[RMDB]
RNA sequence: GGGAACGACUCGAGUAGAGUCGAAAAGAUAUGGAAUUAGGACCACAACUAAACACGCUCGGAAACGAGCGUGUUAAGUGUUGGGUCUAAUUCCUAAGUCAAAGACAGUAGACUUCGGUCUACUGUCCUAAAUGGUCACCUUCGGGUGACCAUUUAGAAAAGAAACAACAACAACAAC
Reactivity to 2A3 in 0.01 (KOAc 150mM, MgCl2 10mM, bicine 150mM(pH8.5), 24C), signal-to-noise 1, nucleotides 027 to 126: g020a000u100a080u210g000g010a000a000u010u000a070g070g210a090c000c020a090c010a300a030c050u030a000a000a000c000a000c000g000c000u050c000g000g060a110a130a060c030g040a000g020c020g030u000g000u010u010a000a000g030u000g050u150u080g000g000g020u010c000u010a000a000u000u000c000c000u010a100a010g060u030c030a220a140a030g000a000c010a010g010u010a000g000a020c020u050u080c300g040g000u000c000u000a000c000u000g000u000c000
Reactivity to DMS in 0.01 (KOAc 150mM, MgCl2 10mM, bicine 150mM(pH8.5), 24C), signal-to-noise 2, nucleotides 027 to 126: g000a080u000a300u000g000g020a010a020u000u000a000g020g000a010c000c000a080c010a040a040c000u000a130a050a040c000a010c020g010c010u000c020g010g000a100a120a230c020g010a000g020c000g020u010g010u010u010a000a040g020u000g000u010u000g010g000g030u000c000u000a000a010u000u000c010c000u010a040a130g000u000c030a070a180a210g000a010c000a000g000u000a000g010a010c000u010u020c270g030g000u000c000u010a000c000u000g000u000c000
This 177-nucleotide RNA was probed chemically with 2A3 and DMS. It was measured as part of the RMDB library TTRDES. For DMS, 2,332 sequencing reads were counted. 2A3 adducts were read by reverse transcription with SuperScript II with manganese.